[RMDB]
RNA sequence: GGGAACGACUCGAGUAGAGUCGAAAAGAUAUGGAUACGCCUGGCAGGCAACAGCUCGGAAACGAGACAUGCCUGCAGGACGUAUCCUAAGUCAAAACCGUAUCGGUUCUUCGGAACCGAUACGGAACGAAGUAUCACUCUUCGGAGUGAUACUUCGAAAAGAAACAACAACAACAAC
Reactivity to 2A3 in 0.01 (KOAc 150mM, MgCl2 10mM, bicine 150mM(pH8.5), 24C), signal-to-noise 2, nucleotides 027 to 126: g030a030u070a040u120g000g010a000u010a000c000g020c030c000u080g300g130c010a000g000g030c000a030a040c080a210g070c010u000c000g000g060a080a070a050c010g010a010g050a050c040a060u100g000c000c010u010g000c000a000g040g020a020c000g010u000a000u010c000c000u000a090a010g030u010c040a010a010a090a240c000c010g000u010a000u000c000g000g050u000u000c010u060u090c290g140g000a020a000c010c000g000a000u000a000c000g010g000a030a000
Reactivity to DMS in 0.01 (KOAc 150mM, MgCl2 10mM, bicine 150mM(pH8.5), 24C), signal-to-noise 3, nucleotides 027 to 126: g010a040u000a300u010g000g010a000u000a000c000g000c000c000u010g010g020c020a000g000g010c000a050a060c220a200g000c010u010c000g000g000a140a080a140c000g010a020g010a040c060a170u010g010c000c000u010g000c000a030g010g000a030c000g010u000a010u000c000c000u000a020a090g010u010c030a120a050a100a100c000c000g010u000a010u000c010g000g000u000u000c000u000u000c160g020g000a020a020c000c010g000a000u000a000c000g000g000a030a030

Chemical mapping of a 177-nucleotide RNA with 2A3 and DMS. The RNA was probed in 150 mM KOAc, 10 mM MgCl2 and 150 mM bicine (pH 8.5) at 24 C. The data come from the RNA Mapping Database (RMDB), library TTRDEL.